[RMDB]
The record gives the reactivity of an RNA of 207 nucleotides to 2A3 and DMS. It was measured as part of the RMDB library OK3TST. DMS adducts were read by reverse transcription with MarathonRT.

RNA sequence: GGGAACGACUCGAGUAGAGUCGAAAACUGGCAGGUAAUGGUCGGAUCGACGGUGCGCGCGCCGAGCAGGAAGGCAUUGAUGUUCUGAAGCACCUGCGGGAUCGGCUUGGCGGCGACGAAGCCGAUCUUCUUGCUUUUCGUCGCAUGGCCGGCCGCGCGUUGACUUCUUAUUCGUAAGAAGUCAACGAAAAGAAACAACAACAACAAC
Reactivity to 2A3 in 0.01 (KOAc 150mM, MgCl2 10mM, bicine 150mM(pH8.5), 24C), signal-to-noise 2, nucleotides 027 to 156: c020u040g060g000c010a040g050g050u160a090a100u100g050g020u020c020g010g020a100u090c040g040a050c080g030g020u030g010c110g000c030g000c060g000c050c050g050a030g010c030a020g010g070a040a050g060g000c020a030u050u250g090a080u080g030u120u070c080u100g050a060a010g010c010a020c000c040u030g000c000g010g090g010a150u100c020g000g000c000u090u230g040g000c000g000g000c000g020a010c080g020a010a000g020c060c030g090a130u040c020u050u030c040u030u090g000c000u020u000u000u020c010g010u020c000g040c070a050u080g010g030c000c000g010g010c000c010g000c030g010
Reactivity to DMS in 0.01 (KOAc 150mM, MgCl2 10mM, bicine 150mM(pH8.5), 24C), signal-to-noise 1, nucleotides 027 to 156: c040u000g010g040c020a060g030g010u010a060a070u000g030g020u000c050g020g000a140u000c030g000a090c050g000g000u000g020c050g050c060g000c070g010c000c020g010a060g030c020a080g020g040a080a070g030g000c070a150u000u000g040a150u020g010u000u000c050u000g000a040a210g010c060a050c010c060u010g000c080g000g010g000a080u010c010g030g020c020u000u010g010g010c040g000g000c030g040a040c080g000a030a030g020c000c190g000a040u000c100u000u000c020u000u000g020c010u000u020u000u000c040g040u000c010g030c040a110u010g010g000c010c000g000g010c030c000g000c040g010